The record gives the reactivity of an RNA of 207 nucleotides to DMS and 2A3. For 2A3 the reverse transcriptase was SuperScript II with manganese. The data come from the RNA Mapping Database (RMDB), library OK3TST. The RNA was probed in 150 mM KOAc, 10 mM MgCl2 and 150 mM bicine (pH 8.5) at 24 C. DMS adducts were read by reverse transcription with MarathonRT. For 2A3, 3,368 sequencing reads were counted.
RNA sequence: GGGAACGACUCGAGUAGAGUCGAAAAUGACAAAUGGAGUCAAGAAACCCAUUUCAGCAGGGAUUACCAGCUGGAUUUCUUAGCAGUAGCUUUGUGGAGAACAUGGAAAUCCCAGCGCCUGAAUGCAAUCUCAGGCUACUUGCCGGUACAGCCACUAGUACUGUAUGGGAUUCGUCCCAUACAGUACAAAAGAAACAACAACAACAAC
Reactivity to DMS in 0.01 (KOAc 150mM, MgCl2 10mM, bicine 150mM(pH8.5), 24C), signal-to-noise 2, nucleotides 027 to 156: u000g020a060c050a050a110a090u020g000g000a150g010u010c030a130a130g010a120a070a120c020c010c010a140u000u000u000c050a040g050c030a120g030g010g010a120u010u010a100c020c030a200g000c050u040g000g000a100u000u000u020c030u010u000a160g030c030a080g000u000a080g030c030u000u020u010g040u000g000g000a100g020a060a110c070a090u000g030g020a090a060a070u000c030c030c030a090g000c100g000c120c010u030g000a080a070u000g030c060a070a180u000c040u000c020a020g010g000c000u000a030c000u000u010g020c040c040g020g020u010a060c070a100g020c080c020a060c060u000a200
Reactivity to 2A3 in 0.01 (KOAc 150mM, MgCl2 10mM, bicine 150mM(pH8.5), 24C), signal-to-noise 5, nucleotides 027 to 156: u090g000a010c030a030a100a030u150g070g030a110g010u060c040a040a020g110a110a110a060c010c000c020a030u060u070u070c050a040g020c010a010g010g030g040a060u090u180a100c050c020a010g020c040u040g000g030a050u000u040u020c020u040u160a040g020c040a080g040u180a020g030c050u110u170u140g040u120g010g080a120g020a060a030c030a100u110g040g020a010a000a040u060c020c050c020a010g020c020g020c010c000u040g040a080a040u180g070c060a080a100u040c030u010c100a020g000g020c000u020a040c030u040u100g030c020c010g000g000u080a090c040a030g040c030c010a050c070u070a050